[RMDB]
RNA sequence: GGGAACGACUCGAGUAGAGUCGAAAAGAUAUGGAGAUGAGCAACAGCGACUGGUCGGAAACGACCGCGUCGACAUGCCAUCUCCUAAGUCAAAACGUCACCCUGGGGUUCGCCCCAGGGUGACGAAGUUAUAAAAGGUGUUCGCACCUUUUAUAACAAAAGAAACAACAACAACAAC
Reactivity to 2A3 in 0.01 (KOAc 150mM, MgCl2 10mM, bicine 150mM(pH8.5), 24C), signal-to-noise 1, nucleotides 027 to 126: g010a000u060a010u100g000g000a000g000a010u020g010a080g170c010a010a090c100a240g060c020g000a000c010u040g010g000u000c010g030g000a060a010a050c000g000a000c020c020g000c040g020u000c020g050a250c040a040u030g000c000c020a000u000c000u000c000c000u010a000a000g010u000c010a000a040a160a120c010g030u010c030a010c050c040c000u060g000g030g150g050u100u200c300g190c000c000c020c000a000g050g000g040u000g000a000c010g010a000a030
Reactivity to DMS in 0.01 (KOAc 150mM, MgCl2 10mM, bicine 150mM(pH8.5), 24C), signal-to-noise 1, nucleotides 027 to 126: g010a030u010a280u020g000g000a050g010a000u000g000a190g040c020a030a070c300a140g010c010g000a020c010u020g010g000u010c000g000g010a070a060a120c000g020a010c010c010g010c240g000u000c000g000a060c040a230u000g010c000c000a000u000c000u010c000c000u000a020a080g000u000c020a120a050a110a170c030g000u000c000a000c020c000c000u000g000g000g010g000u000u010c270g000c010c000c000c000a020g010g000g030u010g020a000c000g000a000a040

Chemical mapping of a 177-nucleotide RNA with 2A3 and DMS.
For DMS, 1,542 sequencing reads were counted.
The 2A3 profile rests on 2,411 reads.
The reactions ran in a buffer of 150 mM KOAc, 10 mM MgCl2 and 150 mM bicine (pH 8.5), at 24 C.